[RMDB]
RNA sequence: GGGAACGACUCGAGUAGAGUCGAAAAUCCAGACAAUUCGCACUAAGACUCUUAAAGCUACUGGACCGAAGGAACCUCACGACCGUGUGCAGCUGGCAAACGUGCGAAAAUGGAGAGCUGGCCGGCAGCCCAUGCCCGUGUUCGCACGGGCAUGGGCAAAAGAAACAACAACAACAAC
Reactivity to 2A3 in 0.01 (KOAc 150mM, MgCl2 10mM, bicine 150mM(pH8.5), 24C), signal-to-noise 1, nucleotides 027 to 126: u020c000c000a000g000a010c050a000a150u060u030c020g000c020a000c010u220a110a120g000a090c000u110c020u130u150a110a190a000g010c030u050a050c000u070g040g090a000c000c000g090a210a110g060g000a020a080c020c010u020c060a110c080g130a020c000c070g110u100g000u000g200c000a000g000c010u090g000g000c030a080a070a040c010g000u000g020c000g110a000a000a000a140u040g000g070a130g000a010g020c000u060g060g020c000c000g080g030c010a000
Notes
An RNA of 177 nucleotides, treated with 2A3 and read out base by base. For 2A3 the reverse transcriptase was SuperScript II with manganese. Values are in units of 0.01, from 0 to 300, in steps of 10. The data come from the RNA Mapping Database (RMDB), library OK1LIB. The reactions ran in a buffer of 150 mM KOAc, 10 mM MgCl2 and 150 mM bicine (pH 8.5), at 24 C.